[RMDB]
RNA sequence: GGGAACGACUCGAGUAGAGUCGAAAAACAUCAAGAUCGUUCUUACGGUUAUGCUGACACACUCGAAGCGAGGGAGAAGCAUGUACGAGAGUGCGGAGAGCAUCUUGUCGUGCCACACAGAGGACAGCCAGAUUAGCGAUUUCGAUCGCUAAUCUGGAAAAGAAACAACAACAACAAC
Reactivity to DMS in 0.01 (KOAc 150mM, MgCl2 10mM, bicine 150mM(pH8.5), 24C), signal-to-noise 2, nucleotides 027 to 126: a050c090a100u000c060a060a120g000a060u000c050g030u000u010c080u030u000a110c100g000g010u000u000a040u000g060c030u000g000a210c170a120c140a090c040u040c010g020a120a130g020c130g020a000g010g000g000a050g010a080a050g020c010a010u000g040u000a000c020g010a160g000a050g000u020g030c060g010g000a090g000a150g000c010a060u000c020u000u000g000u000c030g010u000g060c010c020a030c160a080c120a070g000a060g000g030a070c120a020g000
Reactivity to 2A3 in 0.01 (KOAc 150mM, MgCl2 10mM, bicine 150mM(pH8.5), 24C), signal-to-noise 2, nucleotides 027 to 126: a020c030a040u080c040a040a020g020a050u020c050g040u050u020c010u020u190a090c010g050g000u040u070a030u050g050c000u060g060a000c000a020c000a010c040u040c020g130a110a100g090c030g060a020g040g000g010a100g010a070a000g040c020a020u040g050u070a020c020g000a020g000a040g200u080g010c050g050g020a190g010a000g180c000a010u000c000u020u030g050u020c020g030u030g060c000c030a060c000a000c000a050g090a000g050g070a000c030a000g120